An RNA of 207 nucleotides, treated with 2A3 and read out base by base. The reactions ran in a buffer of 150 mM KOAc, 10 mM MgCl2 and 150 mM bicine (pH 8.5), at 24 C.

[RMDB]
RNA sequence: GGGAACGACUCGAGUAGAGUCGAAAAGCUGAGAGCGAGCACAGGAGAGGAGAAGGAGCCCUGGGGCCAGCUUGACGGUGGCUGACUCAAGCCCCUGUAACUGUCUGAGCCUCAAUUUCCCCAUCUGUAGUAUGAGAACAUUUAACUGGGAGAACUCGAGACCUUAGGUUUUCGAACCUAAGGUCUCAAAAGAAACAACAACAACAAC
Reactivity to 2A3 in 0.01 (KOAc 150mM, MgCl2 10mM, bicine 150mM(pH8.5), 24C), signal-to-noise 1, nucleotides 027 to 156: g000c050u040g020a000g000a020g080c020g010a020g020c020a030c020a020g030g080a070g000a030g050g050a060g020a020a100g020g000a030g000c030c000c000u010g000g020g000g010c030c000a000g040c030u060u060g010a020c010g060g020u020g020g020c010u020g030a230c020u050c140a080a000g000c010c000c000c030u000g010u050a140a100c050u040g070u110c000u000g010a010g030c030c000u000c000a010a020u090u030u000c020c030c000c000a020u050c050u150g020u110a130g000u000a000u150g080a040g000a110a010c050a090u140u210u160a040a040c060u080g060g010g000a110g070a020a000c210u190c130